[RMDB]
Overview: Structure probing data (2A3) for a 207-nucleotide construct. Source: RMDB library OK3TST, as collected in RNAgym. For 2A3 the reverse transcriptase was SuperScript II with manganese. Conditions: 150 mM KOAc, 10 mM MgCl2 and 150 mM bicine (pH 8.5), 24 C. For 2A3, 491 sequencing reads were counted.
RNA sequence: GGGAACGACUCGAGUAGAGUCGAAAAUCUAUGUGUACUACGACUUUUGGUACUACGGCGCAGGCGGGGACGCCUAUAUCGGCCUUCAUGGGCAGACGGGACUCACCAGUUCCAAGCCGGCCAAAACCUACAGUCACGCGGUCUCAACCAACUGGCCGAUGCAACAACCAUUCGUGGUUGUUGCAUCAAAAGAAACAACAACAACAAC
Reactivity to 2A3 in 0.01 (KOAc 150mM, MgCl2 10mM, bicine 150mM(pH8.5), 24C), signal-to-noise 1, nucleotides 027 to 156: u070c020u050a140u120g070u000g070u070a070c010u040a010c000g090a160c090u060u010u060u010g030g000u010a160c030u060a030c160g020g020c040g040c070a030g000g000c010g000g000g000g130a000c020g030c000c040u080a110u000a010u030c010g080g000c000c000u160u210c280a300u240g000g020g000c000a000g040a060c040g000g000g040a000c000u010c140a120c060c050a000g000u000u000c020c000a050a010g030c030c000g030g080c000c010a010a010a010a010c030c000u040a050c000a030g000u020c000a000c040g130c000g000g040u000c000u030c090a090a140c020c000a060a170c110u100g020g000c070c140